RNA sequence: GGGAACGACUCGAGUAGAGUCGAAAAGGGUGAGACCUAGGAACCGUAGGGGUAUUCUCAAAGAAAGCUUUUGCAGUGACGCCCAUGUAAGUGGGAUAUAACAACAGAACUCGUAUGAGUAGCCUAAUAAAUCGGACCUUCUUCGGAAGGUCCGAAAGACGUAAUUAUCGUUCGCGAUAAUUACGUCAAAAGAAACAACAACAACAAC
Reactivity to 2A3 in 0.01 (KOAc 150mM, MgCl2 10mM, bicine 150mM(pH8.5), 24C), signal-to-noise 1, nucleotides 027 to 156: g040g030g010u040g060a070g030a110c010c010u040a080g000g160a020a060c040c040g020u040a050g000g000g000g030u010a050u130u150c050u020c020a060a060a040g050a010a080a030g060c020u040u050u110u060g040c050a040g000u010g020a050c050g000c010c010c000a010u080g100u170a070a110g020u020g010g020g000a000u000a000u040a060a010c040a040a000c010a050g060a040a010c010u010c020g070u200a080u170g010a000g010u050a040g000c000c020u040a040a060u110a170a180a090u020c080g000g000a000c000c000u000u000c000u000u020c050g100g000a010a000g010g000u030c000c000g000a000a000a000